Chemical mapping of a 207-nucleotide RNA with 2A3.

RNA sequence: GGGAACGACUCGAGUAGAGUCGAAAAAAUAUGCUGGAUUGACUAAAGAGCUACAUCAAAGGCUAACUCUAGAGUUUGAUGCAUUGAGGGAAGAACAUCAUAGGACACUAACUCAAUAUAUAAUGGAAACCAAGAAAUGCAACAGAACGGAAGCUAGCUCUUCCCUCAUGUUCGCAUGAGGGAAGAGAAAAGAAACAACAACAACAAC
Reactivity to 2A3 in 0.01 (KOAc 150mM, MgCl2 10mM, bicine 150mM(pH8.5), 24C), signal-to-noise 1, nucleotides 027 to 156: a000a000u180a070u090g060c050u030g000g110a170u110u000g030a040c030u150a140a070a020g060a030g050c030u090a040c020a090u080c110a020a090a070g020g000c050u080a090a060c030u000c000u170a010g000a030g090u050u130u040g030a030u040g050c020a010u000u110g000a030g000g000g140a140a000g010a080a000c030a020u140c020a030u030a060g000g020a020c030a000c040u110a120a000c010u010c060a010a030u130a010u100a000u000a050a030u050g040g000a110a020a020c020c030a020a020g010a020a160a000u050g010c030a030a060c040a080g050a050a000c040g040g030a010a000g040c050u030a010g050

Values cover nucleotides 27 to 156. Values are in units of 0.01, from 0 to 300, in steps of 10. Conditions: 150 mM KOAc, 10 mM MgCl2 and 150 mM bicine (pH 8.5), 24 C.